[RMDB]
RNA sequence: GGGAACGACUCGAGUAGAGUCGAAAAGCUGCCUCUGACGUCCUUAAGGGUGGUAAAGCGGGUCUCCCCCGGAAACAGGGCCGCGCCUGGCGCUAGCACGGGUAUGCGUGGGGGUCGACCCUGGCCGCAUAUGAGUAAUGUUCGCAUUACUCAUAUGAAAAGAAACAACAACAACAAC
Reactivity to DMS in 0.01 (KOAc 150mM, MgCl2 10mM, bicine 150mM(pH8.5), 24C), signal-to-noise 9, nucleotides 027 to 126: g010c040u000g010c020c010u000c040u000g010a120c090g010u000c030c030u000u010a160a150g010g000g020u010g010g010u000a040a080a120g010c100g010g010g000u000c020u000c020c010c000c020c010g010g010a070a100a090c060a040g000g000g020c040c050g010c090g010c010c010u000g010g010c030g020c080u000a140g010c060a090c070g010g000g010u000a090u010g010c020g020u000g010g000g010g000g010u000c140g000a030c010c000c000u000g000g010c020c060g010
Reactivity to 2A3 in 0.01 (KOAc 150mM, MgCl2 10mM, bicine 150mM(pH8.5), 24C), signal-to-noise 9, nucleotides 027 to 126: g010c010u030g030c010c000u040c030u050g050a040c040g060u050c010c010u070u120a090a100g060g010g010u070g030g020u090a130a080a010g100c060g020g000g020u000c030u030c020c000c000c000c010g080g080a090a130a030c030a020g020g030g010c040c020g020c030g030c010c010u030g060g000c010g010c080u060a040g030c070a050c130g060g000g040u080a050u180g020c010g010u090g010g020g000g000g010u030c050g000a020c000c000c010u010g030g060c010c020g010